Source: RMDB library OK3TST, as collected in RNAgym. An RNA of 207 nucleotides, treated with 2A3 and DMS and read out base by base. The 2A3 profile rests on 2,176 reads. The reactions ran in a buffer of 150 mM KOAc, 10 mM MgCl2 and 150 mM bicine (pH 8.5), at 24 C.
RNA sequence: GGGAACGACUCGAGUAGAGUCGAAAAACACGUGACAGAAGAAUAAAGACUAUUGAAUAGUCCUCUUCUCUACCCAUGGACUUGGCAUUUUUAUAUUCGAUUUUAAGGAAAUAUAACUUAGUAGUAAAGAGAUGAGCAUUCAAGUCAGGCAGACCUACUCAUAAAUUUAGUUCGCUAAAUUUAUGAGAAAAGAAACAACAACAACAAC
Reactivity to 2A3 in 0.01 (KOAc 150mM, MgCl2 10mM, bicine 150mM(pH8.5), 24C), signal-to-noise 3, nucleotides 027 to 156: a000c060a000c030g070u050g050a000c040a050g080a040a020g020a050a120u120a150a150a010g020a010c010u020a030u150u260g070a130a150u040a030g010u000c000c000u000c010u020u020c020u000c010u080a100c000c000c020a030u040g050g020a050c040u040u040g030g000c030a080u020u060u010u140u060a070u050a040u060u030c010g010a040u070u080u040u290a070a030g020g000a050a080a020u080a010u000a070a000c000u020u030a010g020u020a010g010u050a090a150a040g030a010g020a030u070g030a010g000c020a010u060u080c030a080a000g030u040c020a010g040g000c010a000g020a030c030c000u020a030
Reactivity to DMS in 0.01 (KOAc 150mM, MgCl2 10mM, bicine 150mM(pH8.5), 24C), signal-to-noise 3, nucleotides 027 to 156: a100c060a070c070g020u000g030a120c060a300g030a080a050g000a100a140u000a130a120a090g010a030c020u000a070u000u000g030a100a300u000a090g030u000c000c030u010c080u010u000c010u000c000u000a070c030c030c020a140u000g010g010a060c060u000u000g020g010c050a050u000u000u000u000u000a020u010a040u020u000c000g010a220u010u000u000u000a050a150g020g000a070a030a050u000a030u000a030a040c080u000u000a070g000u000a080g030u000a030a040a050g010a090g000a040u000g000a060g020c030a070u000u000c030a060a080g020u000c030a030g010g030c040a140g000a090c030c010u010a140